Structure probing data (2A3 and DMS) for a 177-nucleotide construct. Values cover nucleotides 27 to 126. For DMS, 11,557 sequencing reads were counted. Reactivities are rounded to 0.1 and cut off at 0 and 3. The data come from the RNA Mapping Database (RMDB), library OK2TST. For 2A3 the reverse transcriptase was SuperScript II with manganese. Conditions: 150 mM KOAc, 10 mM MgCl2 and 150 mM bicine (pH 8.5), 24 C.
RNA sequence: GGGAACGACUCGAGUAGAGUCGAAAAGGUGAUCUCUUUAUAGUUGAGGUUACAGGAGUAUGGCAGUUUACAAACUAUAAUGCCAAGCCUGCUUUGGGAACACUGAACAGGGUGGUUGAGGACACCAAAUAAAUGGAGUGUUCGCACUCCAUUUAUUAAAAGAAACAACAACAACAAC
Reactivity to 2A3 in 0.01 (KOAc 150mM, MgCl2 10mM, bicine 150mM(pH8.5), 24C), signal-to-noise 3, nucleotides 027 to 126: g010g020u050g070a170u000c020u000c000u040u120u040a190u080a120g060u020u060g070a040g030g070u060u030a030c050a020g090g050a040g120u190a110u110g020g060c060a040g010u100u150u110a090c050a050a060a000c030u040a020u050a160a070u090g000c000c000a000a060g080c000c000u050g010c030u030u030u040g050g010g020a100a020c080a040c130u020g010a040a020c030a050g040g000g060u020g060g000u040u100g030a040g000g020a010c000a010c050c000a010
Reactivity to DMS in 0.01 (KOAc 150mM, MgCl2 10mM, bicine 150mM(pH8.5), 24C), signal-to-noise 7, nucleotides 027 to 126: g010g010u000g010a060u000c010u000c020u010u010u010a060u000a080g010u000u000g010a100g010g010u000u000a090c060a070g000g010a110g020u010a060u000g010g010c040a070g010u010u010u010a110c180a090a050a070c090u000a070u000a040a070u010g010c010c020a040a120g000c010c010u000g000c160u000u000u000g010g010g000a080a090c160a100c070u000g000a020a060c060a060g000g000g020u000g000g010u000u000g010a090g010g000a060c030a020c020c020a080